The record gives the reactivity of an RNA of 177 nucleotides to 2A3 and DMS. Values are in units of 0.01, from 0 to 300, in steps of 10.

[RMDB]
RNA sequence: GGGAACGACUCGAGUAGAGUCGAAAAUGAGGCAAUGGGCAACAUUAUGUACCAGCUGUCAUCCAUGAAGUUCAAGGUGGGUUAACACGCAAAUUUAUCCAUUGCCUAGACACUGGGUGACCACAUACACUAAAAUUACUUUCGAGUAAUUUUAGUGAAAAGAAACAACAACAACAAC
Reactivity to 2A3 in 0.01 (KOAc 150mM, MgCl2 10mM, bicine 150mM(pH8.5), 24C), signal-to-noise 9, nucleotides 027 to 126: u170g020a030g020g000c020a020a060u060g010g020g030c020a080a030c020a160u140u150a120u220g030u040a070c020c020a020g020c060u040g020u020c000a010u000c010c000a030u110g100a140a050g080u150u120c080a050a020g090g020u050g030g050g020u070u100a070a020c050a010c120g090c070a050a090a090u090u100u050a040u030c000c010a020u020u090g010c000c000u000a020g020a000c030a000c040u010g040g000g010u030g020a020c010c010a030c010a060u160a030
Reactivity to DMS in 0.01 (KOAc 150mM, MgCl2 10mM, bicine 150mM(pH8.5), 24C), signal-to-noise 9, nucleotides 027 to 126: u000g010a090g000g010c010a050a040u000g000g000g020c130a050a080c200a090u000u010a080u000g010u000a130c080c070a090g000c100u010g020u000c050a040u000c020c010a050u000g010a090a110g020u010u000c100a070a080g010g030u000g010g000g010u010u000a050a060c150a070c150g010c170a060a060a100u000u000u000a050u010c000c010a040u000u010g000c010c010u000a050g010a060c080a090c060u000g000g000g010u000g000a070c030c130a060c120a080u010a140